[RMDB]
RNA sequence: GGGAACGACUCGAGUAGAGUCGAAAAUGGAACUUAAAUCUGUGAUAACCUAAACUAAAAGUCUCAAACAACCCGUUACUUGCUGACCAAUUUUUGUAGGUACUGGGUGUAAAUAUGAUGACCGGUACAUAGGUCUAUCCUUCGGGAUAGACCUAUGAAAAGAAACAACAACAACAAC
Reactivity to DMS in 0.01 (KOAc 150mM, MgCl2 10mM, bicine 150mM(pH8.5), 24C), signal-to-noise 2, nucleotides 027 to 126: u000g020g010a040a090c140u000u000a050a170a140u010c050u000g010u000g010a080u000a200a110c010c010u000a050a070a080c190u000a030a060a230a080g000u000c030u000c010a050a130a040c110a090a030c010c010c010g030u000u000a020c000u000u000g000c030u000g010a120c240c210a040a120u000u000u000u000u020g020u010a000g000g010u000a000c020u000g000g030g000u000g000u000a040a060a070u000a130u000g000a050u010g000a030c010c060g030g000u030a090
Reactivity to 2A3 in 0.01 (KOAc 150mM, MgCl2 10mM, bicine 150mM(pH8.5), 24C), signal-to-noise 1, nucleotides 027 to 126: u030g010g020a000a000c020u110u050a210a100a100u090c030u030g040u060g020a060u040a120a020c000c060u020a150a080a080c050u090a170a030a030a110g000u000c010u010c000a050a060a160c000a020a110c000c000c000g000u010u030a030c030u010u010g000c010u030g020a110c000c040a150a150u060u070u060u140u110g010u000a040g010g010u010a000c030u050g000g000g040u020g010u020a000a070a100u220a100u110g050a070u060g000a000c010c000g030g000u070a010